Chemical mapping of a 177-nucleotide RNA with DMS and 2A3. 2A3 adducts were read by reverse transcription with SuperScript II with manganese. The RNA was probed in 150 mM KOAc, 10 mM MgCl2 and 150 mM bicine (pH 8.5) at 24 C.
[RMDB]
RNA sequence: GGGAACGACUCGAGUAGAGUCGAAAAGAUAUGGAUUAACAUCUCUACCCACCCUUACAGUCCCGAAGAACGCUGUCGGAAACGACAGCGGGAGGGACUCGUAAGGAGGAGAUGUUAAUCCUAAGUCCAUGUGUGUAAGGUUCGCCUUACACACAUGAAAAGAAACAACAACAACAAC
Reactivity to DMS in 0.01 (KOAc 150mM, MgCl2 10mM, bicine 150mM(pH8.5), 24C), signal-to-noise 4, nucleotides 027 to 126: g010a070u010a300u010g010g010a020u010u000a000a000c000a010u010c010u000c010u010a150c040c100c120a300c100c010c000u000u000a010c000a030g010u000c000c000c000g000a120a110g000a170a250c000g030c010u010g010u000c000g010g010a140a070a230c010g000a010c020a010g020c000g000g010g000a070g000g020g000a000c000u000c120g000u000a000a000g000g010a030g010g010a010g000a010u000g000u000u000a000a010u000c000c000u000a020a120g000u000c040
Reactivity to 2A3 in 0.01 (KOAc 150mM, MgCl2 10mM, bicine 150mM(pH8.5), 24C), signal-to-noise 2, nucleotides 027 to 126: g120a030u210a090u300g010g000a020u000u000a020a000c000a010u000c000u010c010u150a290c060c080c000a050c020c020c010u020u000a000c010a000g010u010c000c000c030g200a300a030g020a040a000c020g030c010u000g010u020c020g080g000a140a120a070c000g000a000c000a000g000c020g010g000g000a010g010g000g000a000c000u000c000g000u000a010a020g000g000a020g000g020a000g000a000u010g000u000u000a000a000u010c000c000u010a080a020g050u000c020